[RMDB]
RNA sequence: GGGAACGACUCGAGUAGAGUCGAAAAUAAAGAAAGUCAACAGCAACGCGGCUCUUGGAGCAGUGUUCGCUGAACAGAAUCAAUGGAGCACGGCUCGUGAGGCUGUGGAUGACCCGCGGUUCUGGGACACUACGCGAUAGUUCGCUAUCGCGUAGUGAAAAGAAACAACAACAACAAC
Reactivity to 2A3 in 0.01 (KOAc 150mM, MgCl2 10mM, bicine 150mM(pH8.5), 24C), signal-to-noise 4, nucleotides 027 to 126: u240a020a130a030g130a040a100a000g080u100c060a050a010c000a100g030c000a010a030c000g010c010g030g000c000u000c020u170u300g160g020a000g000c020a010g030u020g000u010u040c080g000c030u000g020a040a010c010a010g020a020a040u030c020a000a120u120g030g010a010g100c000a000c010g000g000c000u050c110g180u180g100a070g030g000c000u000g000u010g030g040a060u100g130a090c000c000c010g000c050g040g000u020u000c010u020g020g040g020a000
Reactivity to DMS in 0.01 (KOAc 150mM, MgCl2 10mM, bicine 150mM(pH8.5), 24C), signal-to-noise 3, nucleotides 027 to 126: u030a050a080a070g020a090a080a110g000u020c110a140a210c000a000g000c030a030a010c010g020c010g020g010c000u010c000u040u060g050g020a020g100c000a030g000u000g030u000u000c090g010c030u000g010a180a090c020a000g000a020a030u000c000a100a280u020g000g000a160g000c030a010c030g000g000c000u000c030g000u040g000a190g000g010c000u000g000u010g010g010a090u010g010a120c040c000c050g010c300g000g000u000u000c000u010g000g000g020a210
Record summary
This 177-nucleotide RNA was probed chemically with 2A3 and DMS. The DMS profile rests on 4,855 reads. The RNA was probed in 150 mM KOAc, 10 mM MgCl2 and 150 mM bicine (pH 8.5) at 24 C. The 2A3 profile rests on 4,064 reads. For DMS the reverse transcriptase was MarathonRT. DMS (dimethyl sulfate) methylates the pairing face of unpaired adenines and cytosines.